Background:
Structure probing data (2A3 and DMS) for a 207-nucleotide construct. Source: RMDB library OK3TST, as collected in RNAgym. The RNA was probed in 150 mM KOAc, 10 mM MgCl2 and 150 mM bicine (pH 8.5) at 24 C. For DMS the reverse transcriptase was MarathonRT.
[RMDB]
RNA sequence: GGGAACGACUCGAGUAGAGUCGAAAAGUAUGUUCUACUUAUGUGACUAGCCAUAAGUCAUGAUAAGACUCGUUAUCAUGAGAACAUAGAAUACUCAGUGCGUACUGGCUAGUCACAGUACGACAGAUGACGAGUCUCAUCUGUCACUGAGUGGAAGCGAAUGUUCCUAGUUCGCUAGGAACAUUCGAAAAGAAACAACAACAACAAC
Reactivity to 2A3 in 0.01 (KOAc 150mM, MgCl2 10mM, bicine 150mM(pH8.5), 24C), signal-to-noise 3, nucleotides 027 to 156: g050u020a030u070g030u000u030c000u020a030c000u030u010a030u080g000u000g000a000c000u000a000g000c000c000a030u010a070a050g060u010c000a010u000g000a000u000a000a010g010a010c010u010c010g010u000u000a000u000c000a000u000g000a000g020a040a010c020a060u150a040g100a060a010u070a050c050u050c060a040g070u030g130c040g030u030a030c030u000g000g000c000u000a000g000u000c000a000c000a000g000u010a010c030g000a000c000a000g000a000u000g000a000c000g000a000g010u000c000u000c000a000u000c000u000g000u000c000a000c010u000g000a010g000u010g010g030a020a010g030
Reactivity to DMS in 0.01 (KOAc 150mM, MgCl2 10mM, bicine 150mM(pH8.5), 24C), signal-to-noise 3, nucleotides 027 to 156: g020u000a010u010g010u000u010c010u000a050c010u010u000a020u000g000u000g000a030c010u000a060g000c120c010a040u000a060a130g000u000c010a030u000g000a040u000a020a040g010a150c070u000c070g020u000u000a020u000c020a060u010g000a080g030a080a100c040a150u000a080g010a140a170u000a060c040u010c040a100g020u010g000c120g020u000a110c160u000g020g030c010u010a020g000u000c010a030c000a010g010u000a030c040g000a060c000a020g000a050u000g010a030c020g000a100g030u000c070u000c000a010u000c000u010g020u010c000a050c060u010g000a080g010u000g010g020a070a150g010